Overview:
The data come from the RNA Mapping Database (RMDB), library OK2TRN. Chemical mapping of a 177-nucleotide RNA with 2A3 and DMS. Values cover nucleotides 27 to 126. For 2A3, 17,355 sequencing reads were counted.
RNA sequence: GGGAACGACUCGAGUAGAGUCGAAAAACAGGCCCUCAGAUCACUCAUGGCGUCGCCUCAUCCCUUCCGGAGGUGGUAGCCAGAUUAUCUGCUGGGUUAAACAGGGAGGCGGCUCCACAGACGUGAGCCGUAUAGGAACUUUCGAGUUCCUAUACGGAAAAGAAACAACAACAACAAC
Reactivity to 2A3 in 0.01 (KOAc 150mM, MgCl2 10mM, bicine 150mM(pH8.5), 24C), signal-to-noise 6, nucleotides 027 to 126: a000c050a050g110g020c010c010c010u010c030a060g020a070u030c030a020c110u130c070a190u060g010g010c010g010u020c010g010c000c000u030c010a150u130c020c000c000u060u060c030c030g070g010a040g000g060u050g010g020u040a090g020c000c010a010g010a040u050u050a030u020c020u060g030c040u020g020g020g000u050u060a100a070a010c050a030g010g020g010a000g010g010c030g020g000c010u010c030c030a060c030a100g150a060c120g080u090g040a010g040
Reactivity to DMS in 0.01 (KOAc 150mM, MgCl2 10mM, bicine 150mM(pH8.5), 24C), signal-to-noise 9, nucleotides 027 to 126: a110c130a170g010g010c010c000c010u000c060a040g010a070u000c090a070c130u000c080a160u000g010g000c030g010u000c020g010c000c000u000c040a110u010c070c010c010u000u000c040c020g000g010a030g010g020u000g010g010u000a080g020c020c030a030g000a070u000u000a050u000c040u000g000c120u000g000g010g010u000u000a030a070a130c140a070g010g010g000a060g010g010c090g000g000c010u000c020c030a080c120a120g000a090c150g010u010g000a040g010